Chemical mapping of a 207-nucleotide RNA with DMS and 2A3. It was measured as part of the RMDB library OK3TST.

RNA sequence: GGGAACGACUCGAGUAGAGUCGAAAAAGAUUGCGUCCCAGAGCUUCUACGUGCUGAGAACCGCCGCGCACUGGAUGCGCUCUUCACGCGUCGGCCGGGUAACGGCGUGCUCGCCAACACGCUCUGCGACCUCUAUCGUUCGGCCAGGACCGCGUUGCCAACUAUAUAAAUUCGUUUAUAUAGUUGGAAAAGAAACAACAACAACAAC
Reactivity to DMS in 0.01 (KOAc 150mM, MgCl2 10mM, bicine 150mM(pH8.5), 24C), signal-to-noise 3, nucleotides 027 to 156: a100g030a090u000u010g020c080g010u020c020c000c040a120g010a210g010c090u010u020c040u000a060c040g010u000g030c000u000g000a210g020a050a070c060c030g000c020c020g020c010g040c110a280c020u020g000g010a180u000g010c000g030c020u010c110u000u010c120a090c060g030c030g030u010c040g050g000c020c020g000g020g010u000a140a050c030g010g020c000g030u010g000c010u000c180g000c090c020a050a020c010a000c000g000c020u010c140u000g010c040g030a050c030c020u000c050u000a110u000c100g020u010u020c010g020g000c020c020a180g020g010a060c010c040g030c070g010u000u010g020
Reactivity to 2A3 in 0.01 (KOAc 150mM, MgCl2 10mM, bicine 150mM(pH8.5), 24C), signal-to-noise 5, nucleotides 027 to 156: a000g090a060u100u130g030c090g020u000c060c050c010a000g010a000g010c050u130u100c080u210a090c110g080u160g060c130u170g040a020g000a150a080c060c030g020c010c010g000c010g010c030a020c020u020g040g000a040u050g020c010g010c020u040c070u120u160c080a070c100g040c000g010u100c080g140g060c020c020g020g000g020u060a040a020c010g000g000c030g020u080g010c010u010c010g020c010c010a040a040c060a010c060g000c000u020c020u040g010c010g010a020c000c030u050c020u060a110u100c050g110u100u040c020g010g040c030c030a110g100g040a070c000c050g020c050g040u030u070g030
The reactions ran in a buffer of 150 mM KOAc, 10 mM MgCl2 and 150 mM bicine (pH 8.5), at 24 C. DMS adducts were read by reverse transcription with MarathonRT.